RNA sequence: GGGAACGACUCGAGUAGAGUCGAAAAAGCAAUUCUCAACUUGAGGAUACAGUGUCAGGCUCUACGUGAACUACCAGGUUAAACAAAAUAUCCACUGAUAGAGAUCUUCAUUCUGGCUCAGGGAGAGCAGAAGUCAUUAGCAUGCCUGACAUAUUACGUACUUAUUACUGUUCGCAGUAAUAAGUACAAAAGAAACAACAACAACAAC
Reactivity to DMS in 0.01 (KOAc 150mM, MgCl2 10mM, bicine 150mM(pH8.5), 24C), signal-to-noise 5, nucleotides 027 to 156: a060g010c060a080a080u000u000c000u000c000a100a150c130u010u000g010a080g020g010a100u010a060c080a150g030u000g020u010c010a040g020g020c000u000c020u010a060c080g010u000g010a140a220c010u000a040c010c020a030g000g030u000u000a060a080a300c100a070a110a060a110u000a170u000c010c100a070c010u000g010a060u000a020g010a120g000a080u000c040u000u000c050a090u000u000c020u000g050g020c010u000c010a080g010g020g000a200g000a040g000c030a040g010a030a040g010u000c060a120u000u000a070g030c080a090u010g020c000c000u000g010a010c010a020u000a020u000u010a070c180
Reactivity to 2A3 in 0.01 (KOAc 150mM, MgCl2 10mM, bicine 150mM(pH8.5), 24C), signal-to-noise 9, nucleotides 027 to 156: a000g100c070a040a050u060u010c020u010c020a090a300c120u130u170g020a040g030g020a040u100a140c080a090g030u010g000u000c000a010g010g010c000u000c010u050a040c100g050u030g040a050a050c010u030a040c040c040a020g060g030u090u150a100a160a070c090a050a100a080a040u150a040u070c070c050a080c080u030g020a040u040a040g070a010g010a060u030c040u090u060c050a120u050u030c030u070g240g010c010u010c030a060g130g080g050a160g020a010g030c010a010g010a030a010g020u020c020a050u030u040a010g060c100a050u170g010c000c000u000g000a000c000a000u030a010u000u060a030c080